[RMDB]
RNA sequence: GGGAACGACUCGAGUAGAGUCGAAAAGUACGUCAACACGAUAAAGGCGCUGAAGGAGGUGGAUCCGCGGGGCAUACUGCUGACGGCGGUGGGGGAGCCCAUCAAGGCGUACCUGCGCGGCAGGCCCGCAGAACUACUCAUUCGUGAGUAGUUCUGCAAAAGAAACAACAACAACAAC
Reactivity to DMS in 0.01 (KOAc 150mM, MgCl2 10mM, bicine 150mM(pH8.5), 24C), signal-to-noise 3, nucleotides 027 to 126: g000u000a040c030g000u000c020a060a100c100a080c100g000a140u010a050a070a180g010g010c040g010c060u000g000a090a080g010g000a150g000g000u010g020g010a070u000c050c040g000c100g020g020g010g020c070a110u040a140c060u010g020c030u000g020a110c120g020g010c070g020g030u000g000g010g000g010g020a190g000c070c030c030a070u010c140a100a110g000g000c010g000u010a090c020c020u000g020c040g020c060g040g000c060a050g000g010c040c040c030
Reactivity to 2A3 in 0.01 (KOAc 150mM, MgCl2 10mM, bicine 150mM(pH8.5), 24C), signal-to-noise 2, nucleotides 027 to 126: g020u040a040c030g020u020c060a100a030c040a050c170g030a030u070a140a170a050g080g000c020g010c110u060g080a040a030g030g040a040g040g040u090g020g070a070u000c020c010g000c060g050g000g000g030c010a040u120a130c020u060g040c010u040g070a070c070g090g110c050g090g000u070g010g010g020g000g030a030g010c070c000c000a020u080c040a030a060g030g000c010g000u020a020c000c000u020g050c090g000c000g060g000c010a000g020g040c010c010c000